[RMDB]
RNA sequence: GGGAACGACUCGAGUAGAGUCGAAAACAAGGCAAAGGGCCAAUGUGAGCCUGGAGGAGCUAAGGGUGAUCACUCCCAUCUCGACUUCGACUAAUUUAGCGCAUAGGUUGAGGGAUCGUAGCACUCACGGGAAAUGCAACUUCGGUUGCAUUUCCCGAAAAGAAACAACAACAACAAC
Reactivity to 2A3 in 0.01 (KOAc 150mM, MgCl2 10mM, bicine 150mM(pH8.5), 24C), signal-to-noise 2, nucleotides 027 to 126: c000a040a030g080g000c000a000a000a130g100g030g010c020c000a070a060u180g020u050g060a070g000c000c020u030g030g000a000g020g080a040g000c010u080a000a120g040g010g040u040g060a130u050c050a040c060u000c020c000c030a080u100c050u040c020g050a000c010u010u000c000g090a070c040u030a060a230u230u050u270a040g030c040g000c090a110u090a080g070g030u030u070g000a010g000g070g010a000u060c010g020u010a010g020c020a020c090u080c040a010
Reactivity to DMS in 0.01 (KOAc 150mM, MgCl2 10mM, bicine 150mM(pH8.5), 24C), signal-to-noise 1, nucleotides 027 to 126: c200a060a210g000g050c040a000a100a070g040g060g000c000c000a180a040u000g000u040g000a240g050c000c020u020g000g000a240g120g000a150g020c040u000a210a050g000g090g040u000g000a040u150c240a040c190u050c080c040c010a170u030c070u050c000g000a020c070u000u000c070g050a080c030u000a060a120u030u030u040a050g040c010g000c240a000u040a090g030g000u000u000g000a100g030g000g000a140u000c060g000u010a000g000c090a040c000u080c150a100

The data come from the RNA Mapping Database (RMDB), library OK1LIB. Chemical mapping of a 177-nucleotide RNA with 2A3 and DMS. Values cover nucleotides 27 to 126. The DMS profile rests on 1,159 reads. Conditions: 150 mM KOAc, 10 mM MgCl2 and 150 mM bicine (pH 8.5), 24 C. For 2A3 the reverse transcriptase was SuperScript II with manganese. The 2A3 profile rests on 1,006 reads.